[RMDB]
RNA sequence: GGGAACGACUCGAGUAGAGUCGAAAAGUGUAAAGAGCAUACUGAAGUACUGGAGGGCAAGUCUGGUGCCAGCAGCCGCGGUAAUACCAGCUCCAGUAGCGUCUGUGUUUAUUGCUGCGGUUAAAACUACUAAAAUAUGCUUCGGCAUAUUUUAGUAAAAAGAAACAACAACAACAAC
Reactivity to 2A3 in 0.01 (KOAc 150mM, MgCl2 10mM, bicine 150mM(pH8.5), 24C), signal-to-noise 9, nucleotides 027 to 126: g070u060g040u120a100a110a020g060a030g020c030a030u070a140c050u070g060a090a020g020u050a020c020u030g010g020a040g030g080g020c070a070a030g040u010c020u050g010g010u040g030c020c020a030g020c040a010g020c020c020g010c010g000g010u020a020a010u010a030c010c000a010g010c050u020c010c030a110g060u080a020g030c050g040u030c020u020g100u010g030u090u130u070a030u010u030g000c010u000g010c000g020g000u020u040a020a080a020a040c050
Reactivity to DMS in 0.01 (KOAc 150mM, MgCl2 10mM, bicine 150mM(pH8.5), 24C), signal-to-noise 9, nucleotides 027 to 126: g010u010g010u010a030a070a090g000a080g010c050a060u010a080c070u010g010a090a080g020u010a050c050u010g000g010a070g020g000g000c080a060a100g010u020c030u000g010g010u010g000c040c030a070g000c130a090g000c030c010g010c020g010g000u000a020a030u000a050c050c020a020g000c050u000c030c060a140g020u030a070g020c090g000u010c040u000g000u030g010u010u030u010a030u010u000g000c010u000g000c070g010g000u000u010a040a050a090a100c180